[RMDB]
RNA sequence: GGGAACGACUCGAGUAGAGUCGAAAAUCGGGCAUCACGGCCGCGUCGGUGCCGAACACGAAGCCCGCAUCGACUUCGCCGCGCGCGACAUAGUCGAGGCUCUGGCGCACGUUCGCGGCGAGCACAAUGGACUAGUCGUAUUCGUACGACUAGUCCAAAAAGAAACAACAACAACAAC
Reactivity to DMS in 0.01 (KOAc 150mM, MgCl2 10mM, bicine 150mM(pH8.5), 24C), signal-to-noise 3, nucleotides 027 to 126: u000c050g020g030g000c040a100u010c060a120c130g000g020c070c040g020c200g010u000c100g000g010u020g010c020c010g000a070a110c160a180c150g000a060a120g020c010c010c110g010c230a070u010c040g000a060c070u000u020c010g000c010c050g000c090g030c190g010c000g020a010c300a040u000a050g000u000c030g010a130g030g000c020u010c040u010g000g000c000g010c010a130c110g000u000u000c020g070c000g000g010c020g030a070g030c070a050c200a090a090
Reactivity to 2A3 in 0.01 (KOAc 150mM, MgCl2 10mM, bicine 150mM(pH8.5), 24C), signal-to-noise 1, nucleotides 027 to 126: u100c000g000g040g050c020a040u060c040a020c090g120g000c060c010g130c000g160u150c100g000g000u080g000c030c000g070a080a050c080a000c130g070a060a000g010c000c020c000g020c040a130u070c000g100a110c010u040u010c020g000c000c010g030c000g020c010g030c010g040a020c050a080u100a030g000u040c030g030a030g080g000c020u000c030u050g030g000c020g030c010a050c080g120u100u110c020g030c030g000g000c000g030a000g000c070a010c060a140a140